[RMDB]
RNA sequence: GGGAACGACUCGAGUAGAGUCGAAAAGUCGUUGCUUUAAAUGCGACCGCAUUCAGUUUACUAGUUAAAUUCUUAUUGCCAGAUGUCUUAAAUAAUGGGAAACUAUACACCAUUGCGGGCUGGGACGCAUGGCGUGACUUUUCGAAGUCACGCCAUGAAAAGAAACAACAACAACAAC
Reactivity to 2A3 in 0.01 (KOAc 150mM, MgCl2 10mM, bicine 150mM(pH8.5), 24C), signal-to-noise 4, nucleotides 027 to 126: g040u040c020g030u010u030g070c030u180u120u190a130a070a040u120g000c000g030a100c040c010g020c000a020u070u060c070a000g050u080u060u020a180c150u040a030g110u090u160a060a110a150u090u000c070u030u070a050u020u110g120c060c010a030g050a180u030g090u030c020u090u170a180a150a100u130a020a010u040g010g030g030a090a070a040c040u060a040u050a120c080a030c020c020a030u050u030g000c000g000g060g000c030u040g030g020g000a000c060g000
Reactivity to DMS in 0.01 (KOAc 150mM, MgCl2 10mM, bicine 150mM(pH8.5), 24C), signal-to-noise 3, nucleotides 027 to 126: g000u010c080g010u000u000g010c050u020u000u030a100a090a060u000g000c030g020a070c060c060g010c040a060u010u000c250a040g000u040u020u010a060c140u000a050g000u000u010a070a050a050u020u030c090u010u010a070u030u020g010c080c080a070g000a070u040g010u010c080u040u020a120a050a040u020a030a040u000g010g000g030a140a040a090c110u000a080u030a110c180a090c010c050a000u000u000g000c090g000g000g030c060u000g030g020g020a050c050g000